The data come from the RNA Mapping Database (RMDB), library OK2TST.
Structure probing data (2A3 and DMS) for a 177-nucleotide construct.
The 2A3 profile rests on 1,240 reads.
Conditions: 150 mM KOAc, 10 mM MgCl2 and 150 mM bicine (pH 8.5), 24 C.
RNA sequence: GGGAACGACUCGAGUAGAGUCGAAAACGGCAAACCGUGGUCGAACGAGAAUGGCCCGAUGAAAAGGCCGAAGGUUUGCCGCACGCCCAUUGCCGCGCUCAUCACGAGCGCGCCGGCGACCACGGCACCUGGGUGAUGGGUUCGCCCAUCACCCAGGAAAAGAAACAACAACAACAAC
Reactivity to 2A3 in 0.01 (KOAc 150mM, MgCl2 10mM, bicine 150mM(pH8.5), 24C), signal-to-noise 1, nucleotides 027 to 126: c030g000g000c010a000a000a020c040c040g040u010g000g030u030c030g050a160a200c050g050a100g080a210a080u150g000g000c030c020c000g070a110u300g070a080a020a040a050g000g010c000c000g020a090a020g040g020u000u010u030g000c000c000g010c000a020c030g000c000c000c010a010u020u220g070c070c080g000c000g010c000u000c000a180u270c140a120c220g000a000g000c000g010c000g050c000c040g010g030c010g000a010c020c000a000c040g000g020c030a040
Reactivity to DMS in 0.01 (KOAc 150mM, MgCl2 10mM, bicine 150mM(pH8.5), 24C), signal-to-noise 2, nucleotides 027 to 126: c000g020g000c020a040a000a030c010c040g000u000g030g000u000c010g000a070a180c070g000a110g000a080a090u020g000g010c000c010c000g010a170u010g010a040a180a160a140g000g030c010c000g020a130a130g020g000u000u000u000g020c010c050g030c030a010c120g010c000c000c060a180u030u010g030c090c060g060c020g010c000u000c000a210u020c300a130c220g000a030g000c010g040c050g000c040c020g000g000c020g000a030c020c010a030c000g000g000c210a140